Structure probing data (DMS and 2A3) for a 177-nucleotide construct.
RNA sequence: GGGAACGACUCGAGUAGAGUCGAAAAGAUUGAUGGUACUAAAUGCGCCAGGUCUAGCUUCGAAGACGCCACUGUUACUGCCUGUGUGUGCGAGCGCAUGCUUGUAAGUUGCACCAAGGAAUUUAAGUGACAUCAGUAGUUUCGACUACUGAUGUCAAAAAGAAACAACAACAACAAC
Reactivity to DMS in 0.01 (KOAc 150mM, MgCl2 10mM, bicine 150mM(pH8.5), 24C), signal-to-noise 4, nucleotides 027 to 126: g000a060u010u000g000a100u000g020g010u010a080c060u020a060a100a070u010g010c070g000c030c010a070g000g000u000c020u000a090g020c080u010u000c060g020a120a090g020a100c090g020c050c040a060c040u000g000u000u000a050c060u000g010c030c020u000g020u010g010u010g000u000g020c050g020a070g010c030g010c110a050u000g010c050u000u000g000u010a050a070g010u000u010g010c050a090c030c050a050a100g000g000a090a100u000u010u010a060a100g010
Reactivity to 2A3 in 0.01 (KOAc 150mM, MgCl2 10mM, bicine 150mM(pH8.5), 24C), signal-to-noise 2, nucleotides 027 to 126: g050a020u100u120g030a060u030g050g100u030a000c050u100a090a220a200u130g030c030g020c010c020a010g040g000u020c020u000a040g050c030u070u060c080g050a070a020g060a010c030g000c020c020a030c030u030g020u110u130a060c020u060g000c030c020u050g020u000g000u010g010u050g060c040g030a030g010c050g000c050a010u080g050c020u050u090g000u030a040a140g000u050u080g000c050a010c050c030a020a030g110g000a080a050u190u240u200a170a080g060
Values cover nucleotides 27 to 126.
The 2A3 profile rests on 1,405 reads.
Conditions: 150 mM KOAc, 10 mM MgCl2 and 150 mM bicine (pH 8.5), 24 C.
For 2A3 the reverse transcriptase was SuperScript II with manganese.